[RMDB]
RNA sequence: GGGAACGACUCGAGUAGAGUCGAAAACUCAAUGUAGGGAAUAACAUUGAAUUGAUACUAAUACCUUUUUCGGUGUAGGGAAAAACACCGAAUUGAUACAAAUACCUUUCUCAAUGUAGGGAAUAACAAAACAGGCAUCGCUUCGGCGAUGCCUGAACUAGUAUUGUGUGUUCGCACACAAUACUAGAAAAGAAACAACAACAACAAC
Reactivity to DMS in 0.01 (KOAc 150mM, MgCl2 10mM, bicine 150mM(pH8.5), 24C), signal-to-noise 2, nucleotides 027 to 156: c050u000c040a060a060u000g020u020a060g010g020g030a100a170u000a060a090c010a030u010u000g010a040a070u010u010g000a070u000a110c030u010a210a070u000a020c000c000u060u010u000u030u010c000g030g010u010g030u000a090g040g010g000a090a100a170a140a020c000a010c000c000g010a000a000u000u000g010a020u000a030c060a040a060a060u010a010c000c010u010u000u000c060u010c020a060a040u000g010u010a170g010g000g010a080a060u000a050a110c080a030a090a090a180c040a020g040g000c000a010u000c000g050c020u000u010c300g030g030c000g040a020u010g010c000c000u010g040a020a060
Reactivity to 2A3 in 0.01 (KOAc 150mM, MgCl2 10mM, bicine 150mM(pH8.5), 24C), signal-to-noise 5, nucleotides 027 to 156: c010u000c000a010a030u050g010u060a100g070g100g100a130a140u120a100a030c010a010u010u010g040a080a100u100u090g030a120u100a170c070u090a150a160u120a160c010c010u040u010u000u000u000c000g000g000u000g000u010a010g040g020g080a090a110a100a020a010c000a000c010c000g000a000a000u010u020g000a000u010a040c020a000a090a010u090a040c000c010u020u100u040c040u020c050a080a120u180g040u110a040g000g010g060a010a070u080a140a060c080a040a060a030a030c010a000g000g000c000a000u000c000g020c040u070u110c210g050g000c000g020a000u000g000c000c000u000g000a000a000